[RMDB]
RNA sequence: GGGAACGACUCGAGUAGAGUCGAAAACAAUUAUUAAUGCACGUAUUAAAGCUAAGCACAUUGUCUAUGUAGGAGAUCCAGCACAGUUGCCAGCUCCUAGGACUUUGUUGACUAGAGGCACAUUGGAAAACGAACUGCUUCGGCAGUUCGAAAAGAAACAACAACAACAAC
Reactivity to DMS in 0.01 (KOAc 150mM, MgCl2 10mM, bicine 150mM(pH8.5), 24C), signal-to-noise 4, nucleotides 027 to 129: c060a000a000u060u070a100u010u060a030a110u020g000c000a090c240g070u090a080u000u070a000a020a010g000c000u030a120a110g010c000a040c070a100u000u050g020u030c030u070a090u000g000u000a020g040g000a040g030a040u050c130c170a150g000c070a060c150a160g040u020u040g080c000c120a100g020c000u060c110c020u000a040g000g020a040c070u030u040u020g020u100u020g030a070c030u020a020g050a030g010g030c040a090c130a080u080u120g030g020a050a010a030a110
Reactivity to 2A3 in 0.01 (KOAc 150mM, MgCl2 10mM, bicine 150mM(pH8.5), 24C), signal-to-noise 4, nucleotides 027 to 129: c040a050a100u120u120a090u080u060a170a000u110g010c020a020c100g060u040a080u110u240a110a130a000g030c010u010a010a000g010c000a030c020a030u000u010g020u000c000u000a090u170g290u080a030g000g010a040g020a070u000c010c000a010g020c010a040c060a190g110u190u100g010c030c000a030g030c000u000c000c000u010a000g000g000a010c000u000u000u010g020u020u030g080a110c000u020a030g000a030g050g000c070a010c040a030u050u040g090g030a050a050a040a000